RNA sequence: GGGAACGACUCGAGUAGAGUCGAAAAGCUGGGAGAAGGGAUGGAAACAGCAUGACUGGUUGUGUCCGGCCGGUUGGCUGUCAAGGUGUAGACCUCACUAAGCCCCUGCAGAUCUGGGUAACAUCCCUGCCUAGGACACACCAGGGAUUCAAGGUGGUACCCCUAUUGUAUUCGUACAAUAGGGGUAAAAAGAAACAACAACAACAAC
Reactivity to DMS in 0.01 (KOAc 150mM, MgCl2 10mM, bicine 150mM(pH8.5), 24C), signal-to-noise 4, nucleotides 027 to 156: g030c040u010g000g000g020a090g010a090a060g000g030g020a070u010g010g010a210a070a080c040a050g010c050a110u010g020a080c010u000g020g030u000u000g030u000g020u000c060c030g000g040c030c030g050g020u010u000g000g000c020u000g020u000c090a090a060g010g050u010g010u010a110g000a120c020c030u000c040a090c070u010a090a180g010c030c000c020c040u000g010c060a120g010a090u010c050u000g020g030g040u000a050a100c040a080u000c000c010c000u020g020c020c020u000a050g040g000a050c030a040c030a060c060c000a110g000g010g010a110u000u010c070a070a140g010g030u000g000g010
Reactivity to 2A3 in 0.01 (KOAc 150mM, MgCl2 10mM, bicine 150mM(pH8.5), 24C), signal-to-noise 2, nucleotides 027 to 156: g010c010u050g000g020g020a060g010a110a010g000g010g000a030u020g020g060a020a070a040c020a040g030c020a100u070g030a060c000u010g000g040u110u080g010u020g030u020c040c010g020g000c010c000g020g020u040u050g020g000c020u040g040u100c040a040a080g000g020u020g020u040a080g050a090c020c010u030c010a050c040u050a070a020g000c010c000c000c030u030g000c050a020g010a200u080c060u060g020g000g020u020a030a040c000a060u080c000c020c000u000g010c000c000u040a100g020g000a010c010a000c010a000c020c030a000g020g010g000a010u040u100c040a060a030g110g000u000g040g020
Structure probing data (DMS and 2A3) for a 207-nucleotide construct. For 2A3 the reverse transcriptase was SuperScript II with manganese. For DMS, 10,486 sequencing reads were counted. The data come from the RNA Mapping Database (RMDB), library OK3TST.